RNA sequence: GGGAACGACUCGAGUAGAGUCGAAAAUGUGCCAGCCCCGCUGGGUACACCUGACUUCAAGGGCGUCGUGUUUGGGAUGGUAAGCCAAAGAAAUGUGGGUAAUGAUGCGCCUGGCUCAACCAGAGCCCCCUUUAAUACGUUUCGACGUAUUAAAGGGAAAAGAAACAACAACAACAAC
Reactivity to 2A3 in 0.01 (KOAc 150mM, MgCl2 10mM, bicine 150mM(pH8.5), 24C), signal-to-noise 9, nucleotides 027 to 126: u100g010u030g020c010c000a010g010c040c010c020c060g010c040u060g060g010g050u040a010c020a050c010c010u040g120a120c030u080u040c140a090a080g040g010g010c020g010u050c020g000u030g080u080u090u070g030g000g020a040u040g030g030u050a060a020g040c020c030a080a060a010g110a050a120a040u180g020u110g040g030g020u080a090a080u120g090a050u090g020c020g040c020c010u020g010g000c010u020c020a070a130c100c040a020g010a010g010c010c010
Reactivity to DMS in 0.01 (KOAc 150mM, MgCl2 10mM, bicine 150mM(pH8.5), 24C), signal-to-noise 9, nucleotides 027 to 126: u010g020u000g010c010c010a080g010c040c050c050c120g020c050u000g010g010g020u000a030c040a090c040c030u000g010a110c110u000u000c140a100a130g000g010g020c040g010u000c050g010u000g010u000u000u000g010g010g010a090u010g010g000u010a100a140g010c030c030a040a070a100g000a050a060a100u010g010u000g010g000g000u000a060a080u010g000a080u000g010c050g010c050c040u000g010g010c010u000c040a070a120c100c090a190g000a070g000c020c030